[RMDB]
RNA sequence: GGGAACGACUCGAGUAGAGUCGAAAACUGCGCGUGUUGCAGGAGGGUGGGUGAUGGUCUCGAUCUCUUGUAUUUAGAGAUGGGGUGCCCUUGGUCAGACAGGUUGUGUAUUCUCUGGGGGCGCGUGCGAUAUAUAAUAAUUCGUUAUUAUAUAUCGAAAAGAAACAACAACAACAAC
Reactivity to DMS in 0.01 (KOAc 150mM, MgCl2 10mM, bicine 150mM(pH8.5), 24C), signal-to-noise 7, nucleotides 027 to 126: c040u000g000c030g010c060g010u020g010u020u010g010c090a080g010g000a120g000g000g010u020g000g000g010u010g000a080u020g010g010u010c010u000c030g000a020u000c010u000c000u000u000g010u030a080u040u040u010a010g000a010g000a010u000g000g010g000g020u020g010c020c010c060u010u010g010g000u010c100a050g000a030c120a050g010g000u000u000g010u000g010u000a060u010u010c030u000c030u010g000g000g000g000g010c020g010c030g010u010g010
Reactivity to 2A3 in 0.01 (KOAc 150mM, MgCl2 10mM, bicine 150mM(pH8.5), 24C), signal-to-noise 6, nucleotides 027 to 126: c010u010g000c000g010c020g030u090g030u080u140g020c010a000g000g030a030g020g010g060u090g000g020g010u030g030a070u050g000g020u020c010u020c020g060a010u000c000u000c000u000u030g110u150a170u090u250u080a010g000a000g000a000u030g010g000g000g000u070g010c000c000c000u020u050g030g020u090c020a010g010a030c000a020g020g040u040u040g030u030g010u020a080u090u020c020u000c020u020g000g000g010g020g000c000g000c010g010u010g010
Structure probing data (DMS and 2A3) for a 177-nucleotide construct. The RNA was probed in 150 mM KOAc, 10 mM MgCl2 and 150 mM bicine (pH 8.5) at 24 C. For 2A3 the reverse transcriptase was SuperScript II with manganese.